[RMDB]
Source: RMDB library RSTRND, as collected in RNAgym. Structure probing data (2A3) for a 207-nucleotide construct. Values cover nucleotides 27 to 156. For 2A3 the reverse transcriptase was SuperScript II with manganese. The RNA was probed in 150 mM KOAc, 10 mM MgCl2 and 150 mM bicine (pH 8.5) at 24 C. For 2A3, 443 sequencing reads were counted.
RNA sequence: GGGAACGACUCGAGUAGAGUCGAAAAGGUAACCUAAAACCAUCUAGGCUUUUUUAAACGGAAACUUAGAAACUUCUGAAGACAAGAAACUUGAUCUUCAAUUUGUGAUGAACUCACAAACACAACAAAAUCUACUAUUUGCUUAAUAAAUCGUAGUCUGUUACCCUACGUUCGCGUAGGGUAACAGAAAAGAAACAACAACAACAAC
Reactivity to 2A3 in 0.01 (KOAc 150mM, MgCl2 10mM, bicine 150mM(pH8.5), 24C), signal-to-noise 1, nucleotides 027 to 156: g060g010u010a030a030c000c000u040a100a110a000a030c020c000a000u000c010u010a010g010g000c010u090u080u010u010u000u070a110a070a000c080g010g000a020a020a020c000u030u140a030g030a080a150a090c120u160u090c040u130g000a000a000g000a000c000a010a010g060a220a270a130c010u000u050g020a060u100c000u000u000c040a060a070u000u040u000g000u000g010a020u030g050a090a060c000u000c000a010c000a000a020a020c070a000c020a160a090c020a000a170a000a080u000c000u000a000c000u010a030u000u010u040g070c040u160u210a110a060u060a210a110a000u010c010g000u000a000g010u020